[RMDB]
RNA sequence: GGGAACGACUCGAGUAGAGUCGAAAACAAAUACCGUUCGCGGUAUUUGAAAUACGGAAACCUUCGUGCCGUCAGAAGAUAAGAGGUGCUUGCUCUCGUUAAAAAUCAGCUGAUUCGUCAGCUGAAACACCUAAAAGGCGUUCGCGCCUUUUAGGUGAAAAGAAACAACAACAACAAC
Reactivity to 2A3 in 0.01 (KOAc 150mM, MgCl2 10mM, bicine 150mM(pH8.5), 24C), signal-to-noise 1, nucleotides 027 to 126: c000a000a000a020u010a000c010c000g040u000u050c300g010c000g110g010u010a010u000u000u000g000a000a050a000u140a010c040g050g050a030a080a030c010c040u050u070c060g040u110g020c000c020g060u050c000a110g010a240a040g020a130u120a160a030g050a050g000g040u040g000c050u010u080g010c010u000c010u010c040g110u060u130a020a110a000a060a110u020c000a010g000c000u000g030a040u020u020c080g010u000c090a000g020c010u000g010a010a020a000
Reactivity to DMS in 0.01 (KOAc 150mM, MgCl2 10mM, bicine 150mM(pH8.5), 24C), signal-to-noise 1, nucleotides 027 to 126: c000a020a010a000u000a020c000c000g020u000u030c160g040c000g000g020u000a010u000u000u000g000a060a120a090u030a080c130g030g000a070a050a110c040c020u010u000c080g000u010g010c000c010g000u000c090a110g000a110a060g000a110u030a040a080g000a090g020g020u000g000c040u000u000g010c060u010c010u010c050g000u010u000a010a040a040a110a070u000c020a000g000c000u000g000a020u000u030c180g000u000c000a000g040c010u000g010a020a030a070
The data come from the RNA Mapping Database (RMDB), library M2PK50. An RNA of 177 nucleotides, treated with 2A3 and DMS and read out base by base. For 2A3 the reverse transcriptase was SuperScript II with manganese. The DMS profile rests on 1,147 reads.